[RMDB]
RNA sequence: GGGAACGACUCGAGUAGAGUCGAAAAGCUCUGCGCCGAUCCGAAACGCUAGCAAACAGCCCGCAUCAUGUCGUCUCCUAACUUCGACGUGGUGAAAUACUGAGCUUAUGCGAGUAAGCCUGUUAGCAAUAGAUCAGAACGUUCGCGUUCUGAUCAAGUAGUGUGUUCGUUUCGACGAACACACUACAAAAGAAACAACAACAACAAC
Reactivity to DMS in 0.01 (KOAc 150mM, MgCl2 10mM, bicine 150mM(pH8.5), 24C), signal-to-noise 1, nucleotides 027 to 156: g000c010u000c010u000g000c070g010c020c010g020a210u000c030c060g010a090a040a100c010g010c050u000a050g060c010a050a130a130c110a160g000c030c000c010g020c050a050u010c020a020u000g020u000c000g010u000c160u050c070c020u010a110a090c070u000u000c010g010a040c010g070u000g010g010u010g010a050a090a130u000a070c060u000g020a150g050c040u000u010a210u000g000c090g070a190g010u000a120a070g030c000c030u000g000u000u000a110g000c040a070a080u020a150g000a070u000c000a000g000a040a040c010g010u000u020c300g020c010g030u010u010c000u010g020a000u000c010a020a080
Reactivity to 2A3 in 0.01 (KOAc 150mM, MgCl2 10mM, bicine 150mM(pH8.5), 24C), signal-to-noise 3, nucleotides 027 to 156: g020c000u020c050u060g030c040g000c010c050g130a160u100c050c040g060a060a050a020c050g000c030u040a010g000c040a050a040a110c060a070g060c010c020c020g030c000a010u000c000a010u020g000u000c010g000u000c070u080c050c130u110a150a130c050u050u010c020g000a000c000g000u000g000g000u010g000a060a030a000u190a030c040u030g020a020g010c000u050u020a010u100g090c050g030a060g050u010a000a000g000c000c000u060g040u130u070a070g000c030a110a180u060a190g010a000u000c000a000g000a000a000c010g000u040u040c210g010c010g090u000u010c020u000g000a000u000c000a000a000

Background
An RNA of 207 nucleotides, treated with DMS and 2A3 and read out base by base. The 2A3 profile rests on 2,224 reads. For DMS, 1,659 sequencing reads were counted. Conditions: 150 mM KOAc, 10 mM MgCl2 and 150 mM bicine (pH 8.5), 24 C. The data come from the RNA Mapping Database (RMDB), library M2RFPK.